[RMDB]
RNA sequence: GGGAACGACUCGAGUAGAGUCGAAAAAAGCCUCUGUUCGAAAUCAACGGGAGUGAUCCAGAUGACGGUCCUGCCAUGAGACCGCAACGAGAGCAUGUCGCAUCGAAUGGACUCGGGGAGUCGGCAGUGUAGUGGGGAUGGUUCGCCAUCCCCACAAGGAUAAAAUACUGUUCGCAGUAUUUUAUCCAAAAGAAACAACAACAACAAC
Reactivity to DMS in 0.01 (KOAc 150mM, MgCl2 10mM, bicine 150mM(pH8.5), 24C), signal-to-noise 1, nucleotides 027 to 156: a050a120g020c020c010u000c040u000g030u000u010c020g000a080a160a120u000c010a040a100c000g010g020g000a080g030u000g020a040u000c000c030a200g020a190u010g020a120c000g030g020u000c020c010u010g020c060c260a100u020g000a080g000a010c040c020g000c010a070a050c070g020a130g010a060g000c030a060u000g010u020c040g010c070a170u000c020g010a040a220u000g000g020a030c040u000c040g010g010g000g010a140g040u000c010g000g030c060a140g010u010g020u030a100g030u000g000g000g000g000a090u000g010g000u000u000c130g010c030c000a020u000c000c020c000c000a000c000a000a200
Reactivity to 2A3 in 0.01 (KOAc 150mM, MgCl2 10mM, bicine 150mM(pH8.5), 24C), signal-to-noise 2, nucleotides 027 to 156: a010a010g080c050c010u080c080u030g030u090u160c030g010a060a080a110u050c050a080a070c040g030g010g000a070g090u110g060a100u060c020c020a050g030a140u080g070a090c020g010g010u010c010c010u040g090c040c020a080u110g000a010g000a090c050c000g000c020a020a050c040g030a010g020a070g110c020a050u110g140u190c120g000c040a040u020c040g040a100a090u090g000g010a010c010u000c080g010g010g000g000a030g020u040c000g030g050c050a030g010u050g080u300a180g000u020g000g030g000g000a000u000g010g010u020u000c060g030c040c000a000u000c020c010c000c000a000c000a010a010